[RMDB]
RNA sequence: GGGAACGACUCGAGUAGAGUCGAAAAGAGCAAACCAGGUGGAUAUUUGGGAUAAGAAUGAACAAACAGCAAGAGAGUAUGCUUGGUAUGUUCAAAGAACAUUUAGGAGCCCAUUGUGGCUAGCAUUAGUGACCAGACCAGAGGAAAGCAGUGGAGACACCUUAGGAUCAUUCGUGAUCCUAAGGUGAAAAGAAACAACAACAACAAC
Reactivity to DMS in 0.01 (KOAc 150mM, MgCl2 10mM, bicine 150mM(pH8.5), 24C), signal-to-noise 2, nucleotides 027 to 156: g000a140g010c050a120a160a080c030c010a140g040g030u000g020g020a110u000a090u000u000u010g000g020g020a140u000a090a120g010a070a120u000g020a070a120c030a060a070a070c050a090g000c050a090a100g000a140g000a190g010u010a070u010g030c020u000u000g090g000u000a060u000g000u000u020c020a060a090a140g020a080a050c040a100u000u000u000a040g000g010a130g050c000c020c010a270u000u010g030u000g010g040c000u010a040g000c070a100u000u000a070g030u010g000a070c020c030a070g000a050c060c020a060g010a050g030g010a040a090a100g000c020a050g030u010g020g020a200g000a200
Reactivity to 2A3 in 0.01 (KOAc 150mM, MgCl2 10mM, bicine 150mM(pH8.5), 24C), signal-to-noise 4, nucleotides 027 to 156: g040a000g020c030a040a020a040c020c020a030g000g040u040g040g030a060u030a170u130u100u080g030g010g010a030u090a150a040g070a060a100u100g010a040a010c040a050a060a010c010a030g060c030a070a000g050a000g000a010g120u060a060u100g010c020u040u040g010g050u110a060u050g010u010u000c010a060a050a000g060a060a020c040a040u060u110u090a100g050g000a010g010c010c020c030a090u050u190g050u140g020g000c010u010a010g010c010a010u030u050a020g030u020g040a030c020c030a010g020a020c020c010a030g010a010g040g010a030a000a010g010c030a000g020u020g030g020a020g010a010